[RMDB]
RNA sequence: GGGAACGACUCGAGUAGAGUCGAAAAGUAGGUGCCUUCCGCGUCACGGAGCGCCGUGACCGGGGGUAACCCUGGCCGGGCACAGGCCCGUCUGGGUUAGCCCGCCUGAUCAUGCCGUUGGCUUAGAGACUCACCACAUAUUCGUAUGUGGUGAGUCAAAAGAAACAACAACAACAAC
Reactivity to DMS in 0.01 (KOAc 150mM, MgCl2 10mM, bicine 150mM(pH8.5), 24C), signal-to-noise 1, nucleotides 027 to 126: g020u040a040g000g010u000g020c030c010u010u060c000c000g000c180g000u000c010a000c000g030g030a270g010c300g010c020c030g020u000g010a000c000c010g000g010g000g000g000u030a010a010c070c000c020u010g000g000c090c050g000g000g000c000a180c240a160g000g000c000c000c000g010u010c070u040g010g000g000u000u000a090g020c020c000c010g020c000c000u000g000a050u030c090a080u000g010c110c010g000u020u010g000g000c040u010u000a040g020a300
Reactivity to 2A3 in 0.01 (KOAc 150mM, MgCl2 10mM, bicine 150mM(pH8.5), 24C), signal-to-noise 2, nucleotides 027 to 126: g130u090a020g000g020u010g000c010c000u200u290c070c010g000c080g020u030c000a000c020g030g000a110g200c300g110c050c000g010u020g000a000c030c000g010g000g000g000g000u030a030a020c000c000c000u000g000g030c120c070g030g000g010c080a100c070a190g140g080c000c020c000g100u080c080u210g000g000g000u000u010a020g010c070c000c010g000c010c000u020g010a060u090c050a060u190g000c000c020g090u070u040g040g040c020u010u040a090g000a010